[RMDB]
RNA sequence: GGGAACGACUCGAGUAGAGUCGAAAAGGCGCCAUCCCCAAUCGACGACGACGAACCGUGGGUGCGCACCACCGAGGCACCGUCGCCGACGGCGACGUCGGUCAGGGUGGUGUCGGGACCGACGACACUGCUCUAGAUUGUUCGCAAUCUAGAGCAGAAAAGAAACAACAACAACAAC
Reactivity to DMS in 0.01 (KOAc 150mM, MgCl2 10mM, bicine 150mM(pH8.5), 24C), signal-to-noise 2, nucleotides 027 to 126: g020g010c030g000c000c040a100u010c020c010c000c130a120a110u000c030g020a060c050g010a050c070g010a130c100g020a050a130c120c050g030u010g020g040g040u010g020c000g010c060a050c010c010a020c030c030g000a300g000g020c010a030c100c020g000u010c030g040c000c020g000a140c140g030g010c030g000a060c000g000u000c110g010g000u020c030a070g010g000g020u000g010g000u000g020u010c030g020g020g040a070c010c010g010a060c000g010a120c150a110
Reactivity to 2A3 in 0.01 (KOAc 150mM, MgCl2 10mM, bicine 150mM(pH8.5), 24C), signal-to-noise 1, nucleotides 027 to 126: g030g020c040g000c010c020a100u100c050c000c010c010a000a110u080c050g040a020c010g000a010c020g020a020c040g040a090a070c050c020g020u020g070g040g000u070g060c030g000c000a010c010c010a050c000c030g200a170g000g000c030a010c050c020g000u010c030g040c000c060g240a210c150g000g000c000g000a020c010g020u010c050g000g040u010c020a030g090g060g000u010g000g000u020g000u050c000g010g010g050a040c000c000g020a000c000g010a020c010a000
Structure probing data (DMS and 2A3) for a 177-nucleotide construct. 2A3 is a SHAPE reagent: it acylates the 2'-hydroxyl of flexible nucleotides of all four kinds. The reactions ran in a buffer of 150 mM KOAc, 10 mM MgCl2 and 150 mM bicine (pH 8.5), at 24 C. 2A3 adducts were read by reverse transcription with SuperScript II with manganese.